[RMDB]
RNA sequence: GGGAACGACUCGAGUAGAGUCGAAAACUCAUAGCCGAGGCCCUGUAAUUGGAAUGAGUACACUUUAAAUCCUUUAACAAGGACCAAUUGGAGGGCAAGUCUGGUGCCAGCAGCCGCGGUAAUUCCACCACUUGUUAACAUUCGUGUUAACAAGUGGAAAAGAAACAACAACAACAAC
Reactivity to 2A3 in 0.01 (KOAc 150mM, MgCl2 10mM, bicine 150mM(pH8.5), 24C), signal-to-noise 9, nucleotides 027 to 126: c010u020c020a050u130a040g030c020c020g030a030g040g050c010c000c000u160g300u140a020a010u010u010g020g020a050a140u120g040a080g120u160a070c120a020c080u110u100u060a050a110a060u050c000c000u010u050u100a110a040c100a040a010g010g000a010c000c000a010a010u010u050g020g110a010g000g000g010c010a010a000g020u000c030u050g020g020u040g050c010c010a020g000c010a010g010c010c010g020c030g010g020u060a090a100u070u000c000c010a030
Reactivity to DMS in 0.01 (KOAc 150mM, MgCl2 10mM, bicine 150mM(pH8.5), 24C), signal-to-noise 5, nucleotides 027 to 126: c020u000c020a110u020a180g040c020c020g000a100g030g000c000c000c020u000g010u000a010a000u000u000g000g000a170a080u010g010a200g030u020a110c140a070c070u000u010u010a030a080a170u000c010c000u000u000u010a110a170c280a070a050g000g010a050c010c020a000a020u000u000g000g010a050g000g000g010c010a080a030g000u020c050u010g010g010u000g010c040c010a050g010c040a080g020c040c020g020c050g000g000u010a050a100u030u020c030c080a220
Conditions: 150 mM KOAc, 10 mM MgCl2 and 150 mM bicine (pH 8.5), 24 C.
An RNA of 177 nucleotides, treated with 2A3 and DMS and read out base by base.
It was measured as part of the RMDB libraries RFM100 and RFMREP.